This 177-nucleotide RNA was probed chemically with DMS and 2A3. The reactions ran in a buffer of 150 mM KOAc, 10 mM MgCl2 and 150 mM bicine (pH 8.5), at 24 C. It was measured as part of the RMDB library M2PK50.
RNA sequence: GGGAACGACUCGAGUAGAGUCGAAAAGAAGGCACUUUCGAGUGCCUUCAUGGGGAGCUCAGGUCUCCCUCCCUUGCAAAGUCCCUAAGGGAGGAGACCUAAUUAGGUGCACUUUCGAGUGCACCAACUUUUCUAAGGAAUUCGUUCCUUAGAAAAGAAAAGAAACAACAACAACAAC
Reactivity to DMS in 0.01 (KOAc 150mM, MgCl2 10mM, bicine 150mM(pH8.5), 24C), signal-to-noise 6, nucleotides 027 to 126: g010a020a010g000g010c000a010c000u000u010u010c170g010a020g020u000g000c000c000u000u000c000a030u010g010g000g000g010a190g020c160u010c110a020g000g010u000c000u000c100c030c030u000c000c000c000u000u010g020c170a110a120a140g000u010c020c000c010u000a050a030g010g010g000a030g000g000a030g010a020c000c000u000a010a020u010u010a090g010g010u000g000c000a010c000u000u000u010c160g000a020g020u000g000c000a000c000c000a030a030
Reactivity to 2A3 in 0.01 (KOAc 150mM, MgCl2 10mM, bicine 150mM(pH8.5), 24C), signal-to-noise 7, nucleotides 027 to 126: g010a000a010g010g010c030a000c030u050u080u200c290g100a010g010u000g000c000c000u000u010c000a000u010g000g000g000g010a050g030c060u070c210a020g040g010u000c000u040c040c030c000u010c000c000c000u010u000g070c100a220a100a070g080u090c000c010c010u070a020a020g010g000g010a010g000g010a000g000a000c000c000u010a010a090u110u140a040g000g000u000g010c000a000c000u060u070u100c270g090a010g000u000g000c000a000c000c000a000a010